[RMDB]
RNA sequence: GGGAACGACUCGAGUAGAGUCGAAAAGAUAUGGAAGAUCCACGUCUGCGAUGAAAGCAUUCGGAAACGAAUGCUGGAGCAGUGUGGAGUCUUCCUAAGUCAAAACUAGGAGCUUCGGCUCCUAGAACGUUAUUCUAAUCUUCGGAUUAGAAUAACGAAAAGAAACAACAACAACAAC
Reactivity to 2A3 in 0.01 (KOAc 150mM, MgCl2 10mM, bicine 150mM(pH8.5), 24C), signal-to-noise 5, nucleotides 027 to 126: g020a020u070a040u170g000g000a010a000g000a010u000c000c000a010c030g240u110c060u020g000c020g300a300u030g000a010a010a000g010c000a010u000u010c010g020g000a050a040a040c000g000a000a000u000g000c000u000g000g000a010g000c000a010g020u000g000u010g050g020a020g000u020c000u000u000c000c000u000a070a010g010u010c050a030a010a130a170c000u000a000g000g010a000g000c010u110u130c300g170g000c000u060c010c000u000a000g000a010a000
Reactivity to DMS in 0.01 (KOAc 150mM, MgCl2 10mM, bicine 150mM(pH8.5), 24C), signal-to-noise 7, nucleotides 027 to 126: g010a050u010a300u010g000g010a010a010g010a250u000c000c000a000c000g010u020c020u000g020c000g000a150u010g000a160a140a040g000c000a010u000u010c000g000g000a110a070a170c000g010a010a010u000g010c000u000g000g010a030g030c000a020g020u010g010u000g010g000a020g010u000c000u000u000c000c000u000a010a120g000u000c040a090a080a120a260c010u000a000g010g000a020g010c010u000u010c260g020g000c000u000c000c000u000a000g000a080a150